Source information: Chemical mapping of a 207-nucleotide RNA with DMS and 2A3. The 2A3 profile rests on 994 reads.
[RMDB]
RNA sequence: GGGAACGACUCGAGUAGAGUCGAAAACAGAACUGGAUGGGCCGUGUGCUUAAACAGGACAAGAUCUCCUUCUCUCCAACGUUGUUGCCAACUCAUGAUUCUCCUAACCUGUGCUUGGAGAGACGUGCUACCAUAUAGGUGUUCGCACCUAUAUGAAUAGAUACAUGGAGUUCGCUCCAUGUAUCUAAAAAGAAACAACAACAACAAC
Reactivity to DMS in 0.01 (KOAc 150mM, MgCl2 10mM, bicine 150mM(pH8.5), 24C), signal-to-noise 2, nucleotides 027 to 156: c080a070g000a090a070c010u000g030g010a120u000g000g000g010c000c030g010u000g070u000g000c070u010u000a080a110a190c030a070g030g000a120c080a080a100g010a130u010c030u010c020c030u000u010c020u000c020u000c020c000a040a140c120g000u010u000g010u000u000g010c000c020a070a090c090u000c020a050u000g010a090u000u000c010u000c020c010u000a060a050c040c090u010g000u000g040c090u000u010g000g000a050g000a060g040a050c040g050u000g020c050u000a140c080c000a020u000a010u000a010g000g020u000g020u000u010c300g030c030a000c000c000u000a000u000a010u000g000a080a180
Reactivity to 2A3 in 0.01 (KOAc 150mM, MgCl2 10mM, bicine 150mM(pH8.5), 24C), signal-to-noise 2, nucleotides 027 to 156: c070a040g040a070a020c020u020g000g080a090u040g040g060g000c060c050g230u180g030u180g060c010u040u080a100a010a000c020a010g020g060a010c030a010a120g020a110u020c030u000c020c000u080u000c010u010c000u000c000c000a070a080c170g010u010u000g000u000u040g040c040c060a110a040c090u060c060a050u040g060a180u130u070c020u040c030c000u080a050a090c030c030u120g060u130g100c050u060u020g000g000a010g000a000g020a020c020g040u030g020c040u100a110c040c040a000u000a000u000a000g000g000u020g020u050u070c250g050c090a000c000c000u000a010u000a000u010g000a010a010
Source: RMDB library M2RFPK, as collected in RNAgym.